[RMDB]
RNA sequence: GGGAACGACUCGAGUAGAGUCGAAAAUGAGAUAUAGGGCUCGUUCUACCUCCUGCCCCUUACCCACUUGUAAUACCAAUUGCGGACUUACUAUAUAUCGCAUAUUUAUAUCGUGGGGUAAAGUGAAAAUCUACUACCGAUGAUGUAAGUCUUACAAUAUCUGACCGAUAUUCGUAUCGGUCAGAUAAAAAGAAACAACAACAACAAC
Reactivity to 2A3 in 0.01 (KOAc 150mM, MgCl2 10mM, bicine 150mM(pH8.5), 24C), signal-to-noise 3, nucleotides 027 to 156: u130g010a000g020a040u090a050u060a220g020g040g040c060u070c070g060u160u070c060u100a220c000c050u070c000c030u070g020c000c000c000c000u000u080a040c030c000c000a040c020u040u080g080u120a030a020u060a190c040c060a080a200u050u060g010c060g020g010a040c010u000u080a020c080u070a010u060a100u070a010u200c020g000c050a010u040a090u150u130u040a070u030a010u070c040g000u040g020g050g010g030u030a050a080a030g040u080g100a060a050a010a050u040c020u010a080c000u020a060c020c040g050a050u070g010a010u060g030u040a030a050g000u000c000u000u040a030c050a010a040
Reactivity to DMS in 0.01 (KOAc 150mM, MgCl2 10mM, bicine 150mM(pH8.5), 24C), signal-to-noise 2, nucleotides 027 to 156: u000g000a150g010a130u000a080u000a060g010g020g000c030u000c040g010u010u000c020u000a170c060c070u010c020c020u000g000c020c010c020c020u000u000a100c010c020c010a080c070u000u000g010u030a070a150u000a130c060c070a090a170u000u000g030c100g030g010a110c040u010u000a050c050u000a110u020a180u000a090u000c050g000c050a150u000a060u010u010u000a070u010a060u020c070g020u000g000g020g050g020u000a110a110a060g000u000g010a080a070a110a160u000c050u000a100c030u000a060c030c000g000a070u000g020a140u000g000u000a020a080g000u000c010u030u000a060c090a050a180